[RMDB]
RNA sequence: GGGAACGACUCGAGUAGAGUCGAAAACUCUGCUAGCUGUUCUUUCCCUUCUUACCCUUACAUACUUCAUCUGGGAGACUUUACAUAUGUGAUAUUUAUGAUCUUGUUAGACUGGUAAUUACAAAGUUAGCUUAGUUGGUUUCGACCAACUAAGCUAAAAAGAAACAACAACAACAAC
Reactivity to 2A3 in 0.01 (KOAc 150mM, MgCl2 10mM, bicine 150mM(pH8.5), 24C), signal-to-noise 2, nucleotides 027 to 126: c000u010c030u000g000c020u000a080g000c110u000g040u300u000c000u030u020u030c000c000c000u000u000c040u020u130a040c000c000c000u050u040a000c020a020u000a040c020u060u130c030a010u060c030u150g020g030g000a020g100a050c070u120u170u000a070c070a020u230a060u170g080u040g050a120u060a160u130u180u140a190u120g190a130u010c000u120u070g000u020u000a000g050a160c110u040g020g010u030a070a040u030u000a010c100a060a050a000g060u000